[RMDB]
The data come from the RNA Mapping Database (RMDB), libraries RFM100 and RFMREP. An RNA of 177 nucleotides, treated with 2A3 and DMS and read out base by base.
RNA sequence: GGGAACGACUCGAGUAGAGUCGAAAAGGAUGGGAAUAUUCCCCAUUCUUGGUUACGCUGUAGUGCAAAAGAAUUCCUGGCUCUCUGUUGCACAGCUGACUUGUGCCAUUCUGCUGUUGCUGUAUAGAACAGGUGCGUAAUUCGUUACGCACCUGUUAAAAGAAACAACAACAACAAC
Reactivity to 2A3 in 0.01 (KOAc 150mM, MgCl2 10mM, bicine 150mM(pH8.5), 24C), signal-to-noise 1, nucleotides 027 to 126: g000g000a000u000g000g000g130a120a090u200a270u300u210c000c020c020c010a000u000u000c000u000u030g020g000u020u030a030c030g060c000u100g100u210a050g010u010g000c080a090a050a070a030g090a000a070u080u080c000c000u000g190g000c050u200c000u000c000u090g130u160u070g000c000a000c000a080g000c000u000g050a060c010u000u000g070u030g040c040c040a000u270u000c000u130g050c000u000g000u030u000g090c040u070g040u040a130u060a060g050
Reactivity to DMS in 0.01 (KOAc 150mM, MgCl2 10mM, bicine 150mM(pH8.5), 24C), signal-to-noise 1, nucleotides 027 to 126: g000g000a000u000g020g000g000a140a170u020a100u050u000c140c000c010c000a000u000u000c010u000u000g000g000u010u030a060c220g010c010u000g040u040a060g030u040g020c030a080a050a030a080g000a070a120u000u000c010c040u000g010g030c040u010c090u010c070u020g010u010u020g000c000a020c030a100g000c080u020g000a040c080u000u040g020u020g030c030c060a060u020u010c090u010g040c010u010g020u000u000g000c010u000g010u000a070u020a080g010
The reactions ran in a buffer of 150 mM KOAc, 10 mM MgCl2 and 150 mM bicine (pH 8.5), at 24 C. 2A3 is a SHAPE reagent: it acylates the 2'-hydroxyl of flexible nucleotides of all four kinds.